[RMDB]
RNA sequence: GGGAACGACUCGAGUAGAGUCGAAAAUCAGGAACUUCUCAAUAUGUUGUCCAAACUUCAGACUGUAGUUCAUAUAGCACCAGAAGAGGCACGACGACUUCUAAUUGCUAAUCCUGCUUUACCAUAACGUCCAUAAUGAUUUCGAUCAUUAUGGACGAAAAGAAACAACAACAACAAC
Reactivity to 2A3 in 0.01 (KOAc 150mM, MgCl2 10mM, bicine 150mM(pH8.5), 24C), signal-to-noise 4, nucleotides 027 to 126: u040c000a000g000g050a070a070c060u090u030c020u030c040a030a020u110a080u130g030u030u020g020u000c020c020a070a040a040c000u040u030c010a050g040a120c030u030g040u080a070g060u100u120c110a020u110a010u050a160g070c040a040c060c030a010g040a040a010g030a070g070g000c070a000c050g080a000c000g020a020c000u060u000c020u150a100a040u060u030g020c020u020a010a060u040c000c000u000g020c030u060u040u010a060c000c000a040u060a120a050
Reactivity to DMS in 0.01 (KOAc 150mM, MgCl2 10mM, bicine 150mM(pH8.5), 24C), signal-to-noise 4, nucleotides 027 to 126: u000c040a090g000g020a060a110c130u000u010c070u030c030a040a080u020a080u010g010u000u000g000u000c060c150a080a130a140c050u000u000c040a060g000a160c050u010g000u010a040g000u020u020c140a100u000a110u000a050g020c030a080c140c120a080g000a090a050g010a050g020g000c040a100c150g020a050c070g000a040c040u010u000c100u010a110a100u010u010g020c100u000a060a100u000c020c010u000g000c050u000u000u020a120c050c040a080u020a070a110
Annotation: The data come from the RNA Mapping Database (RMDB), library OK2TST. This 177-nucleotide RNA was probed chemically with 2A3 and DMS. Reactivities are given for positions 27 through 126. The DMS profile rests on 2,396 reads.